[RMDB]
Chemical mapping of a 207-nucleotide RNA with DMS and 2A3. The RNA was probed in 150 mM KOAc, 10 mM MgCl2 and 150 mM bicine (pH 8.5) at 24 C. The data come from the RNA Mapping Database (RMDB), library OK3TST. For DMS, 11,211 sequencing reads were counted. The 2A3 profile rests on 3,179 reads.
RNA sequence: GGGAACGACUCGAGUAGAGUCGAAAACACACCAAGGAAAUGCGGCGCAUGAUGCCGUGGAUGGUCAAGACCCAUCCGUCGCAGCGGGACAACUUCCGUGAGGCGGACAUGAGUCAGGAGCUUGCAACGAUCAACGCAUUGCAGCGAGUCGAGUGGCUAAUGGGAAAGUAUUCGUACUUUCCCAUUAAAAAGAAACAACAACAACAAC
Reactivity to DMS in 0.01 (KOAc 150mM, MgCl2 10mM, bicine 150mM(pH8.5), 24C), signal-to-noise 4, nucleotides 027 to 156: c040a120c040a140c040c020a070a110g010g000a090a060a080u000g000c040g020g000c020g030c100a160u000g020a130u000g020c030c020g040u000g010g010a090u000g010g000u000c040a140a140g010a080c230c010c000a070u000c000c000g050u000c010g000c020a220g020c030g010g000g020a080c060a120a110c170u000u000c000c010g020u010g000a050g000g000c010g000g010a030c050a090u000g000a070g020u000c020a300g010g000a140g010c030u000u020g030c020a090a050c020g020a070u000c040a070a090c090g000c020a070u000u000g010c040a110g010c020g000a100g020u000c070g000a170g040u000g010g000c090
Reactivity to 2A3 in 0.01 (KOAc 150mM, MgCl2 10mM, bicine 150mM(pH8.5), 24C), signal-to-noise 4, nucleotides 027 to 156: c080a010c010a010c020c010a030a090g150g030a060a070a060u170g000c010g010g000c030g000c130a160u220g090a120u250g120c010c030g000u000g000g040a050u070g000g040u020c070a110a040g030a080c000c000c000a000u020c000c000g010u000c010g000c160a090g020c020g010g000g020a040c040a160a160c260u160u020c020c000g020u030g020a070g010g020c010g000g000a010c020a120u060g020a010g010u040c040a030g010g060a040g020c060u080u090g000c070a090a000c060g040a040u120c060a060a090c030g030c070a050u020u100g040c040a030g000c000g000a000g020u040c030g010a010g030u050g040g000c010